[RMDB]
RNA sequence: GGGAACGACUCGAGUAGAGUCGAAAAUGAACCUGCCAUUACAAGUGUAAAAAAACAGGAUGACAUCAAUGCAGCUCCUGGUUCGUCCAUCCUAACCCAAGACUUUUGCUUUGAGAUUCAAACUGCCGAAAAGUAAGGGUUUCGACCCUUACUUUUCAAAAGAAACAACAACAACAAC
Reactivity to DMS in 0.01 (KOAc 150mM, MgCl2 10mM, bicine 150mM(pH8.5), 24C), signal-to-noise 3, nucleotides 027 to 126: u020g020a100a120c020c020u000g040c050c060a120u010u000a070c070a120a120g000u010g010u010a000a010a090a070a050a070a150c100a010g000g010a110u000g000a040c140a080u000c080a070a050u000g010c060a060g020c060u000c020c030u000g020g020u000u010c060g000u010c030c030a070u000c020c000u010a070a100c030c010c020a060a080g020a030c090u000u010u000u000g010c020u010u000u000g010a070g000a110u000u000c090a070a040a110c050u000g000c250c140
Reactivity to 2A3 in 0.01 (KOAc 150mM, MgCl2 10mM, bicine 150mM(pH8.5), 24C), signal-to-noise 2, nucleotides 027 to 126: u080g010a020a010c010c020u040g010c020c010a110u120u130a030c040a150a160g030u050g060u280a030a100a030a030a040a080a030c040a020g010g000a030u040g050a000c010a040u080c030a070a130u120g030c010a010g000c010u040c020c000u010g020g000u010u070c020g010u000c010c010a060u030c000c000u040a050a080c010c000c000a010a070g040a110c100u090u090u080u070g040c010u010u030u100g060a060g020a060u030u060c000a010a030a120c040u070g060c050c020
Structure probing data (DMS and 2A3) for a 177-nucleotide construct. The 2A3 profile rests on 2,103 reads. The RNA was probed in 150 mM KOAc, 10 mM MgCl2 and 150 mM bicine (pH 8.5) at 24 C. The DMS profile rests on 2,213 reads.